[RMDB]
The record gives the reactivity of an RNA of 177 nucleotides to DMS and 2A3. The DMS profile rests on 691 reads. The reactions ran in a buffer of 150 mM KOAc, 10 mM MgCl2 and 150 mM bicine (pH 8.5), at 24 C. For 2A3, 1,584 sequencing reads were counted. 2A3 adducts were read by reverse transcription with SuperScript II with manganese.
RNA sequence: GGGAACGACUCGAGUAGAGUCGAAAAGUCACUCAAUUCGUUGAGUGACAUACUGGGCCCGCAGUCGCGCAUGAAAGGGUCAAGACGCGCUCGAUAAAAUAACUAGUUGCCAGUUCGCUGGCAACAACGAGUAGUGUGUGUUCGCACACACUACUCGAAAAGAAACAACAACAACAAC
Reactivity to DMS in 0.01 (KOAc 150mM, MgCl2 10mM, bicine 150mM(pH8.5), 24C), signal-to-noise 1, nucleotides 027 to 126: g000u000c000a000c000u000c010a000a060u000u010c160g000u030u020g000a050g000u000g000a000c000a020u010a000c080u020g030g010g020c020c000c010g020c120a030g020u000c130g020c130g060c180a140u010g000a100a070a160g000g000g000u030c080a030a050g000a040c030g030c010g000c030u020c110g050a110u020a010a110a080a090u010a030a210c190u030a110g010u000u000g030c000c000a000g000u010u030c150g000c010u000g000g000c000a020a000c000a070a040
Reactivity to 2A3 in 0.01 (KOAc 150mM, MgCl2 10mM, bicine 150mM(pH8.5), 24C), signal-to-noise 1, nucleotides 027 to 126: g010u010c000a000c000u010c000a000a060u070u030c160g050u040u020g020a010g000u000g010a000c000a020u010a000c000u020g000g030g050c010c030c020g000c000a000g090u080c020g000c010g010c060a040u170g130a180a090a050g060g000g000u040c020a000a030g080a030c000g000c000g000c030u010c030g100a100u150a180a140a020a010u130a090a030c100u050a070g010u020u000g000c000c000a010g010u050u060c200g010c020u000g000g000c000a000a000c010a000a000